Source: RMDB library TTRDEL, as collected in RNAgym. This 177-nucleotide RNA was probed chemically with DMS and 2A3. The 2A3 profile rests on 8,339 reads. Reactivities are given for positions 27 through 126. DMS adducts were read by reverse transcription with MarathonRT.
RNA sequence: GGGAACGACUCGAGUAGAGUCGAAAAGAUAUGGAGCUCUCCCCACCGAACUACGAAACGUCGGUCGGAAACGACCGUUAUGGUUCGCGAGGAGCUCCUAAGUCAAACGAUCGGUUCGCCGAUCGAACAUAUCGUUCAGGUUCGCCUGAACGAUAUGAAAAGAAACAACAACAACAAC
Reactivity to DMS in 0.01 (KOAc 150mM, MgCl2 10mM, bicine 150mM(pH8.5), 24C), signal-to-noise 5, nucleotides 027 to 126: g020a070u010a290u000g000g000a020g020c010u000c010u000c060c010c020c030a160c280c010g010a010a010c010u010a080c210g010a120a060a090c280g020u000c020g010g000u000c010g020g010a070a070a170c000g010a010c000c000g030u000u000a140u010g010g020u000u000c000g000c090g010a050g000g000a010g000c000u010c000c010u010a010a070g000u000c070a080a100a200c020g000a010u000c000g000g000u000u010c200g010c010c000g000a000u000c010g010a040a150
Reactivity to 2A3 in 0.01 (KOAc 150mM, MgCl2 10mM, bicine 150mM(pH8.5), 24C), signal-to-noise 4, nucleotides 027 to 126: g040a040u160a150u300g020g010a010g010c010u020c030u030c010c020c020c000a030c020c020g010a010a010c020u070a080c130g260a290a160a010c120g180u100c010g050g000u000c000g020g000a080a040a030c000g010a000c000c010g020u040u050a100u120g020g000u020u020c010g000c040g060a160g050g000a000g000c000u000c000c000u020a040a010g050u030c100a130a050a120c040g000a000u000c000g000g080u080u100c300g000c090c000g000a010u000c000g000a010a010